[RMDB]
Conditions: 150 mM KOAc, 10 mM MgCl2 and 150 mM bicine (pH 8.5), 24 C.
This 170-nucleotide RNA was probed chemically with 2A3 and DMS.
In probing experiments dimethyl sulfate is read out at A N1 and C N3, which are open when not base-paired.
High 2A3 reactivity points to a flexible backbone, as in loops and unpaired stretches.
For DMS the reverse transcriptase was MarathonRT.
RNA sequence: GGGAACGACUCGAGUAGAGUCGAAAAUAGACAAAGUUAAAACACCUCAUAUUGUACGUCAGCGUUUAACUGAGUACACUAUGAUGGAUCUUGUAUAUGCCCUGAGGCACUUUGAUCAAAAUAGCGACCACACACGGCUUCGGCCGUGUGAAAAGAAACAACAACAACAAC
Reactivity to 2A3 in 0.01 (KOAc 150mM, MgCl2 10mM, bicine 150mM(pH8.5), 24C), signal-to-noise 5, nucleotides 027 to 129: u130a010g040a000c010a000a080a000g020u070u090a080a140a060a010c040a000c020c000u000c000a000u000a000u000u020g030u000a000c070g300u000c030a000g030c070g060u080u160u170a030a020c000u000g000a000g000u000a010c020a010c030u000a010u010g000a100u170g000g010a020u050c060u030u040g040u010a050u000a000u090g040c020c020c000u050g070a220g040g000c000a020c010u030u050u050g060a130u060c010a050a080a030a000u110a010g090c070g050a010c000c010a010
Reactivity to DMS in 0.01 (KOAc 150mM, MgCl2 10mM, bicine 150mM(pH8.5), 24C), signal-to-noise 2, nucleotides 027 to 129: u060a100g000a030c030a040a030a040g010u020u020a000a020a000a000c130a050c000c000u010c000a020u010a010u000u000g020u010a010c030g070u010c000a030g010c150g030u040u050u060a110a200c000u000g010a070g060u040a010c000a020c080u000a000u040g000a040u140g040g020a080u020c080u010u060g030u100a020u000a090u060g040c040c000c110u040g010a160g000g000c020a020c040u020u030u000g010a000u000c070a070a040a100a050u040a090g040c090g010a090c030c030a060